[RMDB]
The data come from the RNA Mapping Database (RMDB), library OK3TST. This 207-nucleotide RNA was probed chemically with 2A3. For 2A3 the reverse transcriptase was SuperScript II with manganese. The 2A3 profile rests on 667 reads.
RNA sequence: GGGAACGACUCGAGUAGAGUCGAAAAUGCAGAACGCGUGGGGAAACGAUGCUCUUUUUUCCUUGCAGCUGUGGGAAAGGCUGAGAACAUCUCUCGGUUCAAGGUAUCUUGUGACGAGACCGACAAGAUUGUCGUCCGACCAAAAGAAAGAAACCGGGCGAUUUGACUUAUUCGUAAGUCAAAUCGCAAAAGAAACAACAACAACAAC
Reactivity to 2A3 in 0.01 (KOAc 150mM, MgCl2 10mM, bicine 150mM(pH8.5), 24C), signal-to-noise 1, nucleotides 027 to 156: u090g000c000a020g050a130a040c050g000c020g040u070g020g000g000g020a000a060a050c030g030a040u100g010c000u010c030u060u060u020u000u050u080c020c000u080u150g000c000a070g020c050u050g010u140g040g000g010a040a050a070g080g000c060u030g020a040g010a030a030c010a030u030c010u000c010u010c030g020g020u010u020c000a020a030g000g000u020a070u080c040u030u060g000u040g040a040c030g040a030g050a200c070c000g010a000c050a060a110g160a300u090u280g030u010c010g000u000c000c020g000a070c010c000a000a180a000a000g020a110a140a000g000a090a060a010c010c060g100g070